The record gives the reactivity of an RNA of 177 nucleotides to DMS and 2A3.
The data come from the RNA Mapping Database (RMDB), library OK2TST.
For 2A3 the reverse transcriptase was SuperScript II with manganese.
DMS adducts were read by reverse transcription with MarathonRT.
Values cover nucleotides 27 to 126.
The 2A3 profile rests on 3,698 reads.

[RMDB]
RNA sequence: GGGAACGACUCGAGUAGAGUCGAAAAGUUGCAGACGCAGCGCAGUAACUGGAAUCGUAAUCACAUAGACAACCUGCUGCGCAUGGAGCAGUGUAACAAACAGAGGACAAUGUCUCAUGUGGCGCUAUACCGUAGUGCUAUUCGUAGCACUACGGUAAAAAGAAACAACAACAACAAC
Reactivity to DMS in 0.01 (KOAc 150mM, MgCl2 10mM, bicine 150mM(pH8.5), 24C), signal-to-noise 5, nucleotides 027 to 126: g010u000u010g030c020a070g010a150c120g010c100a070g020c020g030c020a130g010u010a030a080c100u000g010g010a300a070u010c090g020u000a100a110u010c080a060c090a060u010a070g000a030c070a040a130c030c010u010g020c010u000g010c030g010c080a100u000g010g000a090g020c000a040g000u000g000u010a050a030c160a120a070a080c160a110g010a120g000g010a080c110a060a100u010g000u010c010u010c090a050u000g020u000g010g010c110g010c100u010a150
Reactivity to 2A3 in 0.01 (KOAc 150mM, MgCl2 10mM, bicine 150mM(pH8.5), 24C), signal-to-noise 3, nucleotides 027 to 126: g030u020u030g040c010a000g040a160c070g040c060a010g010c030g000c020a020g010u020a060a060c020u050g040g090a060a100u050c040g020u120a060a090u140c040a000c010a120u070a040g020a000c000a030a110c010c000u010g020c000u000g000c030g020c030a020u100g060g040a040g010c010a010g040u030g020u110a080a050c070a030a100a000c040a020g120a030g050g050a000c070a170a130u120g010u000c020u030c040a020u030g030u040g050g030c000g010c040u040a050